[RMDB]
RNA sequence: GGGAACGACUCGAGUAGAGUCGAAAAUCGUGUCAGUAAGCAUGCCGGGGAAUGGUGGUUUACCCCGUUAUCAAAUGAUUACCGACCAAUAAUUGGCGAAACUCGUUUCGCGUUGGCUGCCUAAUUCGUUACCGCUGACCCUUCGGGGUCAGCGGAAGUUAUUUACACGCUUCGGCGUGUAAAUAACAAAAGAAACAACAACAACAAC
Reactivity to 2A3 in 0.01 (KOAc 150mM, MgCl2 10mM, bicine 150mM(pH8.5), 24C), signal-to-noise 1, nucleotides 027 to 156: u140c050g010u050g050u150c030a020g030u030a030a050g000c040a000u040g020c020c050g030g000g020g030a060a040u090g050g130u070g040g050u070u060u250a140c000c000c000c010g010u060u090a110u180c100a110a160a090u070g010a000u020u020a020c000c060g000a020c000c020a010a010u150a090a050u090u060g060g000c020g000a050a020a000c010u030c070g000u000u000u030c040g000c000g040u020u070g080g020c090u040g030c010c000u100a120a100u010u040c020g050u070u110a040c000c000g070c000u000g020a000c020c000c020u050u020c160g140g000g000g000u020c000a000g000c100g000g000a000a000